[RMDB]
RNA sequence: GGGAACGACUCGAGUAGAGUCGAAAAACCUUUGUGAAAUUGUCAGCUCUACGGUUUGGAGCGGAUCCCAUUGGGAUCCGACCCUCUAAUUUGUAGAGCUUGGAUUUAUUUCACUCUGGUAAAUGAGCGCUAGUAAUCUUCGGAUUACUAGCGCUCAGUUACUCUUUUCGUUCGCGAAAAGAGUAACAAAAGAAACAACAACAACAAC
Reactivity to 2A3 in 0.01 (KOAc 150mM, MgCl2 10mM, bicine 150mM(pH8.5), 24C), signal-to-noise 1, nucleotides 027 to 156: a010c000c000u030u000u000g000u000g010a000a000a000u010u030g020u020c000a000g000c020u000c000u020a000c010g060g000u050u060u050g030g000a010g000c000g000g020a010u040c090c000c060a260u280u300g020g000g000a010u060c030c000g090a110c050c040c000u050c000u030a000a060u000u110u300g000u000a010g000a010g000c000u000u040g000g000a020u210u180u160a020u020u000u000c000a010c010u000c010u000g000g020u040a040a060a200u190g000a000g000c040g010c030u000a000g000u000a000a000u010c010u020u060c230g000g000a000u010u000a000c010u010a010g000c020g000c000u010c010a000